[RMDB]
RNA sequence: GGGAACGACUCGAGUAGAGUCGAAAAGAUACGUACCCCUUUUUGCAGACCGCAAGCGACGCAAAUGGCGUUGAGGAUAAUCCAGCAGGUAAUGAUGAUAGCGUCCAGUUGCAGGGUAUGCGGAAUGGGCCUUGAUAGAAUUCGUUCUAUCAAGGCCAAAAGAAACAACAACAACAAC
Reactivity to DMS in 0.01 (KOAc 150mM, MgCl2 10mM, bicine 150mM(pH8.5), 24C), signal-to-noise 2, nucleotides 027 to 126: g020a110u010a140c300g010u030a160c050c010c000c180u000u000u010u000u000g000c000a020g000a180c090c020g040c050a100a300g030c080g000a120c080g000c030a050a110a060u000g000g010c030g070u000u000g030a200g000g010a170u000a050a060u000c050c000a110g000c060a060g020g020u010a110a020u000g020a040u010g020a120u000a050g000c010g020u000c000c050a040g000u000u010g000c010a120g040g010g010u040a070u000g010c040g010g020a050a060u000g020
Reactivity to 2A3 in 0.01 (KOAc 150mM, MgCl2 10mM, bicine 150mM(pH8.5), 24C), signal-to-noise 2, nucleotides 027 to 126: g020a120u100a080c090g090u150a080c010c010c000c030u050u030u010u030u100g030c000a000g020a020c000c010g020c060a070a040g030c040g060a010c030g000c040a070a070a120u090g060g020c000g040u000u040g090a080g050g020a030u050a130a030u100c030c030a040g020c060a070g090g130u130a170a060u120g110a010u040g010a010u090a110g000c010g010u030c000c000a080g030u010u000g030c030a040g100g000g000u150a030u020g010c000g010g020a040a060u060g060